[RMDB]
RNA sequence: GGGAACGACUCGAGUAGAGUCGAAAACAACCUGGAACCUGGGACCUUCGAUCUUGGAGGGCUAUAUGAAGCAAUUGAGGAGUGCCUGAUUAACGAUCCCUGGGUUUUGCUUAAUGCUUCUUGGUUCAACUCCUUCCUCGCACAUGCACUGAAAUAGUACACCAUAUGAUUUCGAUCAUAUGGUGUAAAAAGAAACAACAACAACAAC
Reactivity to 2A3 in 0.01 (KOAc 150mM, MgCl2 10mM, bicine 150mM(pH8.5), 24C), signal-to-noise 4, nucleotides 027 to 156: c010a010a050c020c040u040g050g020a010a040c010c000u020g000g000g050a040c010c020u100u060c070g130a180u070c090u080u160g050g000a030g000g040g000c030u080a060u000a030u250g040a040a040g010c040a090a140u100u110g020a040g030g040a020g030u030g010c000c010u060g020a080u110u100a100a040c060g020a060u060c000c020c010u020g020g000g000u030u050u060u070g020c000u040u080a070a030u120g010c000u000u040c010u020u070g030g000u060u090c010a050a050c040u020c020c000u030u100c000c010u020c040g040c000a060c010a060u120g010c020a010c110u050g040a060a090a000u130a080g080
Reactivity to DMS in 0.01 (KOAc 150mM, MgCl2 10mM, bicine 150mM(pH8.5), 24C), signal-to-noise 3, nucleotides 027 to 156: c030a060a260c000c000u010g020g010a050a080c020c020u000g020g020g010a030c030c030u000u000c040g010a090u000c080u000u000g020g000a080g010g030g000c030u010a100u020a110u000g000a100a080g020c050a060a150u000u010g010a080g000g010a080g030u000g010c030c020u010g010a110u000u000a060a110c060g000a080u010c000c020c030u020g030g020g020u000u000u010u010g000c000u000u000a080a160u010g030c010u000u010c020u000u000g010g000u010u000c050a090a080c020u000c010c020u000u010c020c020u010c020g000c050a100c080a090u010g020c050a100c060u000g000a070a050a110u010a100g020